[RMDB]
RNA sequence: GGGAACGACUCGAGUAGAGUCGAAAAGAACUAGCCCUGAAAAUGGAUGGCGCUAAAGCGGGCUACUUAUACUUUGCCGUUAGCGCGAUAGCAUUUAUAAUGUACGCGUUAAUGAGUAGGAGGGCGUGUUCUGAGUACUGUUCGCAGUACUCAGAACAAAAGAAACAACAACAACAAC
Reactivity to DMS in 0.01 (KOAc 150mM, MgCl2 10mM, bicine 150mM(pH8.5), 24C), signal-to-noise 3, nucleotides 027 to 126: g020a080a080c070u000a120g030c010c000c010u010g000a060a080a120a080u030g010g000a100u000g020g010c020g010c020u000a060a060a130g010c110g020g010g010c000u010a050c030u000u020a050u020a080c050u040u010u020g010c030c000g020u000u000a000g000c000g000c000g030a060u020a140g000c010a000u000u020u050a110u020a080a070u010g000u000a070c000g000c000g000u000u010a020a010u020g010a150g010u010a030g030g010a050g000g010g000c020g030u020
Reactivity to 2A3 in 0.01 (KOAc 150mM, MgCl2 10mM, bicine 150mM(pH8.5), 24C), signal-to-noise 4, nucleotides 027 to 126: g080a040a000c020u010a030g000c000c000c000u030g160a060a050a030a020u140g080g060a040u110g040g000c040g010c080u110a110a040a000g070c040g010g020g030c020u020a030c010u130u120a050u040a140c010u050u060u070g040c000c010g020u000u000a000g000c000g000c010g030a050u040a030g010c000a020u010u110u050a160u110a160a000u020g000u000a010c010g010c000g010u010u000a010a010u030g020a050g090u030a050g010g100a030g030g000g050c050g030u070